Background
Chemical mapping of a 177-nucleotide RNA with 2A3 and DMS.

RNA sequence: GGGAACGACUCGAGUAGAGUCGAAAACGUCGUGAACUAGCGACAAUGCCGUAGAUCGAUCGUUAUCUAACCGAAACAUCGUGACUAGUCGUAGAAUAGAACCAGGAGUGGCCGCUGUCAAACAAAGACGGGUUCUCAGAUUCGUCUGAGGACCCGUAAAAGAAACAACAACAACAAC
Reactivity to 2A3 in 0.01 (KOAc 150mM, MgCl2 10mM, bicine 150mM(pH8.5), 24C), signal-to-noise 3, nucleotides 027 to 126: c030g020u010c000g010u030g060a080a070c060u040a070g020c000g010a020c020a010a060u110g050c000c010g040u080a040g000a080u020c000g010a010u010c040g020u020u010a100u080c030u020a020a140c030c020g020a050a000a050c010a020u030c020g040u020g030a040c030u020a010g060u040c020g040u030a020g040a140a060u090a040g060a050a030c020c020a030g020g010a070g020u050g030g000c000c000g000c020u030g030u070c050a010a080a070c030a010a090a010g120
Reactivity to DMS in 0.01 (KOAc 150mM, MgCl2 10mM, bicine 150mM(pH8.5), 24C), signal-to-noise 4, nucleotides 027 to 126: c180g000u010c000g000u000g010a080a130c100u010a110g000c020g000a050c040a100a080u030g040c010c010g000u010a050g010a100u000c030g010a030u010c090g000u000u010a060u000c020u020a090a080c160c150g010a060a060a080c110a050u000c020g000u000g000a080c080u010a080g030u000c030g020u020a050g010a030a050u020a080g000a090a070c000c020a040g020g020a060g020u000g000g010c010c030g000c020u020g000u040c030a090a040a090c150a060a090a110g010